[RMDB]
RNA sequence: GGGAACGACUCGAGUAGAGUCGAAAAUCUAAGAGCGUAACACACACUCAGACUGUACGACAGUCUGACACACACAUACGCUAGUGUAUCGUGUGUGUGAUAUCGAUGAAGCACGAAAAUGAAAGAAUAGAGACUACGUAUUCGUACGUAGUCUCUAAAAAGAAACAACAACAACAAC
Reactivity to 2A3 in 0.01 (KOAc 150mM, MgCl2 10mM, bicine 150mM(pH8.5), 24C), signal-to-noise 4, nucleotides 027 to 126: u050c030u070a110a040g010a030g100c050g050u090a050a010c020a000c000a000c000a020c070u040c010a000g000a000c000u020g010u130a140c130g160a080c210a000g000u000c000u000g000a000c010a000c000a010c010a010c000a020u090a110c080g060c140u080a100g050u040g010u130a050u100c070g000u000g000u000g010u000g000u010g020a010u020a030u110c060g030a050u130g080a080a020g030c060a000c080g100a080a060a010a050u240g060a070a060a080g080a040a040
Reactivity to DMS in 0.01 (KOAc 150mM, MgCl2 10mM, bicine 150mM(pH8.5), 24C), signal-to-noise 5, nucleotides 027 to 126: u010c020u000a090a140g020a060g040c110g010u000a100a060c070a090c040a050c040a060c090u000c010a010g010a030c000u000g030u010a130c240g000a130c020a010g010u010c000u000g000a070c140a030c030a000c020a020c060a060u010a030c030g010c200u030a090g000u010g010u000a030u000c140g010u000g020u000g020u000g010u000g010a060u010a070u000c040g000a070u010g000a060a140g000c130a090c090g000a040a030a060a090u000g000a060a080a090g010a080a150